[RMDB]
RNA sequence: GGGAACGACUCGAGUAGAGUCGAAAAUUGGCGAAUGCCUGUGGAUCUACAUUUGUUGCGGGUUCGAGACCCGUCAGAGCCCGGCUCUGUAGCUCAAUGGUAGAGCGGUGUAUUCACAUAAACUGGUAAAAGACACGUGCCUUCGGGCACGUGUCAAGUUCUAGCUAUAGUUCGCUAUAGCUAGAACAAAAGAAACAACAACAACAAC
Reactivity to 2A3 in 0.01 (KOAc 150mM, MgCl2 10mM, bicine 150mM(pH8.5), 24C), signal-to-noise 3, nucleotides 027 to 156: u110u020g030g000c020g130a300a060u230g020c000c010u010g000u010g010g020a030u030c050u120a030c010a040u060u060u130g060u040u030g010c010g000g020g010u000u030c020g020a020g020a040c010c000c010g010u000c000a010g000a010g050c130c260c130g120g000c010u010c010u010g030u010a010g000c000u000c030a030a050u140g240g000u110a030g000a010g000c030g000g010u020g000u000a040u000u030c020a000c000a010u140a090a040a080c090u080g040g070u160a090a070a060a070g000a000c000a000c000g000u010g050c000c010u020u120c220g030g000g000c030a000c010g000u000g000u000c000a000a000
Reactivity to DMS in 0.01 (KOAc 150mM, MgCl2 10mM, bicine 150mM(pH8.5), 24C), signal-to-noise 2, nucleotides 027 to 156: u000u000g020g020c010g010a110a070u010g030c030c040u020g040u000g010g000a080u000c020u000a050c010a050u000u010u010g020u000u010g010c060g010g000g030u010u000c050g000a300g010a070c000c030c010g020u000c070a050g040a110g030c030c140c100g050g010c020u000c020u000g000u000a110g030c010u010c040a070a110u010g030g020u000a070g000a030g040c000g010g030u090g000u010a060u000u000c020a040c030a100u000a050a100a110c050u040g020g010u000a070a070a100a180g000a000c010a000c000g020u000g030c020c000u010u010c300g040g000g120c000a010c000g020u000g000u000c000a000a040
Structure probing data (2A3 and DMS) for a 207-nucleotide construct. Source: RMDB library M2RFPK, as collected in RNAgym. Conditions: 150 mM KOAc, 10 mM MgCl2 and 150 mM bicine (pH 8.5), 24 C. For 2A3, 2,177 sequencing reads were counted. High DMS reactivity at an A or C suggests that its Watson-Crick edge is free. High 2A3 reactivity points to a flexible backbone, as in loops and unpaired stretches. 2A3 adducts were read by reverse transcription with SuperScript II with manganese.